An RNA of 207 nucleotides, treated with 2A3 and read out base by base. For 2A3, 847 sequencing reads were counted. Reactivities are given for positions 27 through 156. The reactions ran in a buffer of 150 mM KOAc, 10 mM MgCl2 and 150 mM bicine (pH 8.5), at 24 C. For 2A3 the reverse transcriptase was SuperScript II with manganese.
[RMDB]
RNA sequence: GGGAACGACUCGAGUAGAGUCGAAAAUUGAAAAUUAUGAUACCAUCUAUGAUAGCAAUUACUAAACAUAAACAACAUAAUGCAGAUUUAUUGAAAAUGUGUAUAAAAUAUACUGCGUGUAUGACCGAUUAUGAUACUCUUAUAGAUGUACAAUCGCGCGUACUUAUUCGUUCGCGAAUAAGUACGCAAAAGAAACAACAACAACAAC
Reactivity to 2A3 in 0.01 (KOAc 150mM, MgCl2 10mM, bicine 150mM(pH8.5), 24C), signal-to-noise 2, nucleotides 027 to 156: u090u090g030a040a070a010a020u180u090a140u210g020a020u030a090c020c000a000u000c030u040a040u030g030a020u060a010g040c070a110a090u130u100a180c060u190a170a020a020c000a020u060a020a110a030c060a030a000c000a030u070a100a030u050g010c000a000g070a100u100u150u040a020u020u080g070a010a050a030a080u040g030u000g030u050a060u050a180a110a000a000u100a000u000a030c000u000g000c040g000u060g020u090a050u020g020a030c050c020g000a010u010u070a000u040g010a000u020a050c000u000c000u030u010a020u000a070g000a000u010g020u030a040c150a110a010u000c020g000c000